RNA sequence: GGGAACGACUCGAGUAGAGUCGAAAAGGAAAUAUGAGUGAAAUCAGAAGGACAAUCGUCGUUUUGAUGAUAUACCUUCGCCUCUUUAGAGUAAGGACGAUCUUCAGAGUUGAGUCUUUGAUCUUAAACGCACAUAAUACUUCGGUAUUAUGUGCGUAAAAGAAACAACAACAACAAC
Reactivity to DMS in 0.01 (KOAc 150mM, MgCl2 10mM, bicine 150mM(pH8.5), 24C), signal-to-noise 3, nucleotides 027 to 126: g020g010a070a060a130u010a040u000g000a080g010u000g020a080a110a150u010c100a040g000a000a010g000g000a030c130a090a040u000c090g030u010c000g010u000u000u000u030g000a010u010g000a040u020a070u010a060c010c010u000u000c010g010c150c000u010c050u010u010u010a080g010a160g010u000a060a050g000g020a150c040g000a080u000c020u000u010c150a090g020a060g020u020u000g000a120g000u000c020u000u010u000g000a070u000c020u000u000a030a120
Reactivity to 2A3 in 0.01 (KOAc 150mM, MgCl2 10mM, bicine 150mM(pH8.5), 24C), signal-to-noise 2, nucleotides 027 to 126: g050g020a100a130a020u220a060u180g020a000g080u190g070a070a050a030u120c090a130g010a030a030g010g000a010c100a080a030u080c050g020u010c070g060u080u070u220u300g010a000u020g030a010u040a000u010a010c010c000u000u000c010g000c000c000u030c000u050u100u090a090g000a010g010u060a070a050g010g010a010c030g000a030u010c010u150u100c080a030g040a060g160u180u080g040a050g030u050c000u010u020u080g050a000u020c000u030u050a050a230